[RMDB]
RNA sequence: GGGAACGACUCGAGUAGAGUCGAAAAAUUAUGUUGCUCUACAAACUGAUGUAUUGAACAAAAACCAGCAGAUUCUGGCUAGUGCUUUCAAUCAAGCUAUUGGUAACAUUACACAGUCAUUUGGUAAGGUUAAUGAUGCUAUACAUCAAACAUCACGAUACAGGGAUCAUUUCGAUGAUCCCUGUAUAAAAGAAACAACAACAACAAC
Reactivity to DMS in 0.01 (KOAc 150mM, MgCl2 10mM, bicine 150mM(pH8.5), 24C), signal-to-noise 2, nucleotides 027 to 156: a070u000u000a090u010g010u010u000g010c030u000c060u000a190c030a140a100a130c080u000g010a210u000g010u010a100u000u010g000a110a060c030a020a100a080a070a020c000c020a080g020c050a200g030a200u000u010c010u000g010g030c030u000a050g030u010g030c020u000u000u010c080a060a080u000c070a050a070g020c080u020a150u010u000g010g000u010a060a080c020a080u000u000a080c050a070c070a030g000u000c090a040u020u010u000g010g010u010a080a060g010g040u010u000a060a120u000g000a050u000g040c010u010a130u000a110c080a030u000c040a090a000a040c010a070u020c030a040c010g010
Reactivity to 2A3 in 0.01 (KOAc 150mM, MgCl2 10mM, bicine 150mM(pH8.5), 24C), signal-to-noise 3, nucleotides 027 to 156: a000u150u090a140u060g020u010u020g030c040u000c050u140a100c100a090a180a050c080u030g030a040u010g010u030a030u000u060g030a160a020c030a000a060a010a010a040c010c000a010g050c030a010g040a100u130u030c020u060g060g000c030u020a020g050u000g060c070u030u150u070c020a040a050u020c100a150a030g030c050u100a050u090u020g020g020u040a020a000c000a030u020u060a050c110a000c000a060g050u050c040a030u000u000u060g070g020u080a110a120g040g000u010u020a080a030u160g050a020u190g000c020u050a020u020a050c000a010u010c020a010a060a010c020a030u210c070a030c140g020